[RMDB]
RNA sequence: GGGAACGACUCGAGUAGAGUCGAAAAGCAUGAGAAUCACUUGAACCCAGGAGGCAGAGAUUGCAGUGAGCCGAAAUCGCGCCACUGCACUCCAGCCUGGCGACAGAACCGAGGUGGGCAGAUCAUGAGGUCAGGAGAUCGAGACCAUCCUGGCUAACAUUAUACGGGUGUUCGCACCCGUAUAAUGAAAAGAAACAACAACAACAAC
Reactivity to DMS in 0.01 (KOAc 150mM, MgCl2 10mM, bicine 150mM(pH8.5), 24C), signal-to-noise 2, nucleotides 027 to 156: g040c010a060u000g020a050g030a110a100u010c040a060c040u040u010g010a080a090c050c010c040a100g010g030a100g000g070c040a130g000a030g010a090u000u000g030c020a000g000u000g000a130g040c000c040g000a120a130a130u010c040g010c030g040c020c000a010c010u000g000c000a050c030u000c010c010a140g020c000c030u000g000g010c010g010a210c040a120g010a090a090c050c000g030a070g010g010u000g000g010g000c040a110g000a090u000c060a090u000g000a160g000g000u000c030a020g010g000a110g020a070u010c090g020a100g000a090c030c070a140u010c000c000u000g020g010c010u000a060a200
Reactivity to 2A3 in 0.01 (KOAc 150mM, MgCl2 10mM, bicine 150mM(pH8.5), 24C), signal-to-noise 3, nucleotides 027 to 156: g040c030a060u100g030a010g030a060a050u060c020a000c110u080u050g040a060a050c010c000c020a010g000g040a030g040g070c140a030g020a030g010a080u130u120g000c000a000g000u020g030a060g040c040c010g100a120a130a110u300c060g020c040g000c050c000a000c000u000g000c010a000c010u000c000c010a020g020c000c000u000g020g000c030g030a010c010a050g080a040a000c040c030g020a010g040g020u050g010g010g010c040a020g000a110u070c000a080u140g070a010g040g020u030c010a010g010g000a040g020a040u110c080g060a010g040a090c020c010a030u010c000c000u020g010g000c000u040a060a040